[RMDB]
RNA sequence: GGGAACGACUCGAGUAGAGUCGAAAACCCACACCAGUGCACCAAGACCUGCGGGGUGGGCGUGAGGAUGCGAGACGUCAAGUGCUACCAGGGGACCGACAUCGUCCGUGGUUGCGAUCCGUUGGUGUGAAAUGCACCUAUUCGUAGGUGCAUUUCAAAAAGAAACAACAACAACAAC
Reactivity to DMS in 0.01 (KOAc 150mM, MgCl2 10mM, bicine 150mM(pH8.5), 24C), signal-to-noise 5, nucleotides 027 to 126: c000c000c010a140c140a050c060c030a040g020u000g020c110a050c060c040a100a170g000a060c050c040u000g000c080g030g010g010g010u000g020g020g010c050g020u010g000a120g010g000a100u000g000c070g010a090g010a060c060g010u000c100a090a120g020u000g010c030u010a080c040c030a080g010g000g000g010a080c060c040g010a090c110a060u000c070g010u000c030c060g010u000g010g010u000u000g020c100g000a030u010c120c020g000u000u000g000g010u000g010
Reactivity to 2A3 in 0.01 (KOAc 150mM, MgCl2 10mM, bicine 150mM(pH8.5), 24C), signal-to-noise 3, nucleotides 027 to 126: c000c010c000a000c000a000c010c020a030g060u020g080c030a030c030c020a090a040g030a090c000c020u070g030c080g020g020g000g030u070g030g070g010c010g050u060g040a080g110g040a040u100g070c060g040a060g020a070c030g040u080c080a110a050g050u040g110c010u020a080c020c020a030g000g070g000g060a020c000c030g090a080c030a130u130c050g040u010c010c020g040u050g010g010u000u060g020c010g010a040u030c020c020g030u010u030g010g020u020g010
An RNA of 177 nucleotides, treated with DMS and 2A3 and read out base by base. For 2A3 the reverse transcriptase was SuperScript II with manganese. For DMS the reverse transcriptase was MarathonRT. In probing experiments dimethyl sulfate is read out at A N1 and C N3, which are open when not base-paired. The RNA was probed in 150 mM KOAc, 10 mM MgCl2 and 150 mM bicine (pH 8.5) at 24 C.